[RMDB]
RNA sequence: GGGAACGACUCGAGUAGAGUCGAAAAGGGGCGCGCCUGCCGUGCCUGCGCGGAAGAUCUGAAAAUGGCGAGCCUGCUUGGCAUCAACACCGAUCGGGUAAUUGCGCUGACCUUUGUGAUUGGCGCGGUUACCGAAUGGGUUCGCCCAUUCGGUAACAAAAGAAACAACAACAACAAC
Reactivity to DMS in 0.01 (KOAc 150mM, MgCl2 10mM, bicine 150mM(pH8.5), 24C), signal-to-noise 3, nucleotides 027 to 126: g020g010g010g020c000g020c050g020c020c040u010g000c020c030g020u010g010c030c100u000g010c070g030c010g000g000a090a100g010a100u010c110u020g000a040a030a060a140u010g000g010c030g010a070g020c000c010u000g010c090u020u000g020g000c070a110u010c140a080a070c130a090c020c030g000a070u010c080g010g020g010u000a020a030u010u000g010c010g000c000u000g010a010c010c010u010u010u010g010u020g010a080u000u000g000g010c000g010c000g010
Reactivity to 2A3 in 0.01 (KOAc 150mM, MgCl2 10mM, bicine 150mM(pH8.5), 24C), signal-to-noise 3, nucleotides 027 to 126: g020g000g000g000c020g010c010g040c020c010u020g030c010c000g010u030g050c010c030u070g010c040g000c010g080g000a110a040g070a210u140c110u300g110a060a040a010a070u090g000g000c020g000a010g000c000c000u070g140c010u040u050g020g000c000a080u060c060a110a090c020a040c070c030g070a110u060c000g050g040g000u050a080a040u060u110g000c020g010c000u010g000a010c020c040u080u190u230g230u130g080a300u010u030g020g000c000g020c000g020